[RMDB]
RNA sequence: GGGAACGACUCGAGUAGAGUCGAAAAUUAUAUCAGUAAAUGUUCUAUCAUUACAGAUCUUAGCAAAUUCAAUCAGGCAUUUAGAUAUGAAACAUCAUGUAUCUGCAGUGAUGUAUUAGAUGAACUGCCUAGCUGGUAUAUUCGUAUACCAGCUAGGAAAAGAAACAACAACAACAAC
Reactivity to DMS in 0.01 (KOAc 150mM, MgCl2 10mM, bicine 150mM(pH8.5), 24C), signal-to-noise 3, nucleotides 027 to 126: u010u010a090u030a120u010c010a090g000u000a030a080a050u010g010u000u000c030u000a020u000c000a050u000u000a050c020a030g000a060u000c040u000u000a080g020c100a080a070a100u000u000c060a010a050u010c050a090g030g000c200a080u010u000u010a070g000a060u000a090u000g010a050a040a040c050a060u010c060a010u000g000u000a030u000c050u000g010c030a070g030u010g000a030u000g000u010a060u020u000a090g040a090u000g010a040a040c070u000g010
Reactivity to 2A3 in 0.01 (KOAc 150mM, MgCl2 10mM, bicine 150mM(pH8.5), 24C), signal-to-noise 3, nucleotides 027 to 126: u120u070a110u040a040u190c010a010g060u080a040a130a080u040g010u040u080c030u060a110u080c010a010u030u060a010c010a020g080a030u030c020u050u140a010g020c050a030a060a250u150u060c030a030a080u050c010a040g100g110c040a040u070u120u200a080g030a020u100a080u180g050a060a150a000c010a060u050c010a000u030g040u030a040u030c030u090g000c020a020g010u010g020a020u010g030u040a130u090u110a070g060a090u040g000a020a060c040u030g000
The record gives the reactivity of an RNA of 177 nucleotides to DMS and 2A3. Reactivities are rounded to 0.1 and cut off at 0 and 3. Values cover nucleotides 27 to 126. Conditions: 150 mM KOAc, 10 mM MgCl2 and 150 mM bicine (pH 8.5), 24 C. For 2A3, 1,893 sequencing reads were counted. It was measured as part of the RMDB library OK2TRN.